The record gives the reactivity of an RNA of 177 nucleotides to 2A3 and DMS. The DMS profile rests on 1,618 reads. It was measured as part of the RMDB library OK2TRN. Values cover nucleotides 27 to 126. The reactions ran in a buffer of 150 mM KOAc, 10 mM MgCl2 and 150 mM bicine (pH 8.5), at 24 C.
RNA sequence: GGGAACGACUCGAGUAGAGUCGAAAACUUUUCGGCAGUACAUGAGGGAACUUCCGAAGAAUGCACCUCAGAAGCUGAAUUUUCGGGAGAUGCGUCAGGGGUUGAUUGCCCUAGGACGGCACUGCGACCACUGGUAGCAGUUCGCUGCUACCAGUGGAAAAGAAACAACAACAACAAC
Reactivity to 2A3 in 0.01 (KOAc 150mM, MgCl2 10mM, bicine 150mM(pH8.5), 24C), signal-to-noise 2, nucleotides 027 to 126: c020u000u070u080u050c040g060g000c000a000g020u100a050c050a210u160g040a080g000g090g030a050a020c000u020u000c020c030g030a050a000g010a020a000u080g000c030a040c020c040u090c050a030g000a090a020g010c060u050g100a100a070u040u060u020u060c050g010g050g020a010g010a040u050g040c010g010u020c000a070g000g000g030g040u070u070g160a210u060u300g050c010c000c000u090a100g000g200a000c000g040g010c010a000c010u000g000c000g030a030
Reactivity to DMS in 0.01 (KOAc 150mM, MgCl2 10mM, bicine 150mM(pH8.5), 24C), signal-to-noise 2, nucleotides 027 to 126: c030u000u000u000u000c030g030g000c000a020g010u000a130c140a170u000g010a060g010g010g010a120a170c110u000u010c000c090g050a120a100g010a030a020u000g010c300a140c020c020u000c070a070g000a060a130g000c000u000g000a040a070u000u010u000u000c040g000g000g010a000g060a090u000g030c020g000u000c020a190g010g000g000g010u000u000g020a100u010u000g010c020c010c030u010a060g010g000a030c040g000g010c020a020c020u000g010c030g010a210